Structure probing data (2A3 and DMS) for a 177-nucleotide construct.
2A3 adducts were read by reverse transcription with SuperScript II with manganese.
Conditions: 150 mM KOAc, 10 mM MgCl2 and 150 mM bicine (pH 8.5), 24 C.
Reactivities are given for positions 27 through 126.
RNA sequence: GGGAACGACUCGAGUAGAGUCGAAAACGACGGGGCAUACAAGGUCCUCUACACAAUGACCGUAGCGCGAGCUACCAGUAAGAAGUAGAGGAAGCCGAUGUUCCGUCGUACGUUUUGAAAAACGAACCAAUGCUUACAUGUUCGCAUGUAAGCAUUGAAAAGAAACAACAACAACAAC
Reactivity to 2A3 in 0.01 (KOAc 150mM, MgCl2 10mM, bicine 150mM(pH8.5), 24C), signal-to-noise 6, nucleotides 027 to 126: c000g000a000c000g000g000g000g010c010a000u060a060c060a180a100g010g030u020c000c000u000c000u020a010c100a000c010a020a090u010g000a000c010c000g000u000a000g000c020g010c040g040a030g010c000u010a000c000c000a000g000u000a010a010g040a130a020g010u000a000g000a000g010g010a000a010g030c010c010g010a000u000g010u010u010c000c000g000u000c000g000u000a000c000g000u000u020u020u100g200a100a050a010a010a000c030g010a010a010c030
Reactivity to DMS in 0.01 (KOAc 150mM, MgCl2 10mM, bicine 150mM(pH8.5), 24C), signal-to-noise 8, nucleotides 027 to 126: c000g010a010c010g010g000g000g010c000a000u000a050c140a140a200g000g010u000c000c000u000c000u000a000c010a040c100a110a240u000g000a110c300c300g000u000a000g010c000g010c300g010a250g010c000u000a010c010c000a030g010u000a030a010g010a110a130g000u000a010g010a020g010g000a030a030g020c020c090g000a020u000g000u010u000c000c000g010u000c000g010u000a010c020g010u000u000u000u000g010a060a070a040a030a020c020g010a130a160c160